RNA sequence: GGGAACGACUCGAGUAGAGUCGAAAACAGCAGGGGGUGAUCCACCCGGAGAUGAGCGGACAAGCCACAUCCAGAGGACCCCUUCAGCGAACAGAAGACCCUGGUACCGGGGGGGAAUAGGCCAUAGAUACUUUGGGCUUCGGCCCAAAGAAAAGAAACAACAACAACAAC
Reactivity to 2A3 in 0.01 (KOAc 150mM, MgCl2 10mM, bicine 150mM(pH8.5), 24C), signal-to-noise 2, nucleotides 027 to 129: c010a030g060c060a050g000g000g000g000g000u060g100a060u040c020c020a040c000c010c030g090g000a020g000a100u060g000a020g050c040g020g120a170c080a140a000g000c000c020a070c000a030u000c000c000a000g050a070g040g020a080c000c000c000c000u040u010c020a040g010c000g040a010a030c010a020g100a030a010g170a270c000c000c000u050g010g000u020a080c020c010g000g000g000g000g020g020g020a040a060u010a020g020g020c000c010a060u030a010g050a010u090a110
Reactivity to DMS in 0.01 (KOAc 150mM, MgCl2 10mM, bicine 150mM(pH8.5), 24C), signal-to-noise 3, nucleotides 027 to 129: c050a130g050c120a120g030g100g030g040g010u010g000a200u020c030c020a080c050c070c170g030g010a010g010a000u020g040a300g000c060g010g030a120c280a070a090g040c090c000a000c080a050u020c010c030a300g060a260g020g040a130c010c000c000c080u090u110c040a100g010c060g000a080a030c150a120g020a050a050g020a160c080c020c020u030g040g040u090a060c100c010g000g000g000g000g000g000g000a030a050u030a040g000g050c000c190a070u000a000g000a080u000a020